[RMDB]
RNA sequence: GGGAACGACUCGAGUAGAGUCGAAAAACUGAGGCCGAUCUCACGUGGAUCCUGCGUCCGACACGGGCGCCUCAUCCACCCCGUGUCGUGCCCCGACCCCGCCCGGCUGUCCCCCCGGGCGGGGUAACUUAGUGUCUAUGUUCGCAUAGACACUAAGAAAAGAAACAACAACAACAAC
Reactivity to DMS in 0.01 (KOAc 150mM, MgCl2 10mM, bicine 150mM(pH8.5), 24C), signal-to-noise 1, nucleotides 027 to 126: a020c130u010g020a040g000g010c030c170g000a060u000c020u000c040a060c180g010u000g000g000a080u000c050c060u010g000c020g050u000c060c010g010a100c190a060c070g000g000g000c110g020c030c030u010c140a060u000c050c130a120c000c100c130c040g020u000g000u000c000g010u000g010c030c010c030c080g000a100c000c000c000c040g050c000c000c000g070g000c020u000g000u000c000c020c000c300c000c000g000g020g030c000g000g010g010g020u030a000a020

Source: RMDB library RFMREP, as collected in RNAgym. Chemical mapping of a 177-nucleotide RNA with DMS. The RNA was probed in 150 mM KOAc, 10 mM MgCl2 and 150 mM bicine (pH 8.5) at 24 C.